An RNA of 177 nucleotides, treated with DMS and 2A3 and read out base by base.

RNA sequence: GGGAACGACUCGAGUAGAGUCGAAAACAUCCAGUGUUCGCACUGGAUGAGAGGAAUGUGGAUCGGGAAACUACAUACCAAAAGCUGAGCUCGAAAGAGCAACGAUUUCGUCGUUCGCGACGAAAAAUACUUUCCGUAAGUUCGCUUACGGAAAGUAAAAAGAAACAACAACAACAAC
Reactivity to DMS in 0.01 (KOAc 150mM, MgCl2 10mM, bicine 150mM(pH8.5), 24C), signal-to-noise 4, nucleotides 027 to 126: c000a000u000c000c000a000g040u010g030u010u010c240g030c010a000c000u000g000g000a000u000g000a070g020a080g000g010a100a020u000g010u020g010g020a040u010c090g000g000g020a180a160a080c040u000a020c040a020u010a100c050c020a100a040a060a130g010c150u010g000a290g010c010u010c010g010a080a080a070g000a020g020c020a030a060c240g010a190u010u000u000c010g000u000c000g020u000u010c190g030c010g010a000c000g000a000a010a010a070a140
Reactivity to 2A3 in 0.01 (KOAc 150mM, MgCl2 10mM, bicine 150mM(pH8.5), 24C), signal-to-noise 7, nucleotides 027 to 126: c010a010u000c000c000a000g000u000g040u040u080c210g020c100a000c010u000g000g000a000u010g000a020g010a000g000g030a070a030u020g000u020g020g020a110u120c150g080g050g050a030a060a020c010u020a010c010a020u050a060c020c000a050a070a020a040g090c100u110g060a020g020c010u010c010g050a090a050a030g010a000g010c010a010a020c020g040a070u000u020u020c010g000u000c000g010u030u050c240g010c010g060a000c000g030a010a000a000a010a000
It was measured as part of the RMDB library M2PK50. DMS adducts were read by reverse transcription with MarathonRT. For 2A3 the reverse transcriptase was SuperScript II with manganese.